Source information:
This 207-nucleotide RNA was probed chemically with 2A3. The data come from the RNA Mapping Database (RMDB), library OK3TST. 2A3 adducts were read by reverse transcription with SuperScript II with manganese. Conditions: 150 mM KOAc, 10 mM MgCl2 and 150 mM bicine (pH 8.5), 24 C. The 2A3 profile rests on 450 reads.

[RMDB]
RNA sequence: GGGAACGACUCGAGUAGAGUCGAAAAGCCACACAUUUCCAUUCAGGGAAGAUGGUUGUCAGUUCAUCCGGAACUAUUCUGACUCGCCAUCCCCUAUUGUGCAGGGUUAUCAGAUCCACACUGGUGGCCACCUCGCCUCGGAGGGGCUCAUUGGUCCGCAAGCUUCCAUAUUCGUAUGGAAGCUUGCAAAAGAAACAACAACAACAAC
Reactivity to 2A3 in 0.01 (KOAc 150mM, MgCl2 10mM, bicine 150mM(pH8.5), 24C), signal-to-noise 1, nucleotides 027 to 156: g040c000c000a010c000a010c000a090u020u090u160c090c030a060u100u190c200a030g000g010g010a120a210g000a180u010g000g020u100u050g000u000c010a010g000u110u080c110a150u230c140c150g160g020a100a050c070u110a170u170u110c000u000g000a000c020u030c280g000c000c000a000u000c000c000c030c000u050a040u020u060g060u000g020c060a100g080g000g010u100u070a060u120c110a010g010a120u100c000c040a020c000a000c110u050g000g000u030g000g030c000c000a260c030c000u040c010g080c030c000u090c110g130g000a090g000g060g000g000c010u080c020a130u050u240g060g000u000c010c000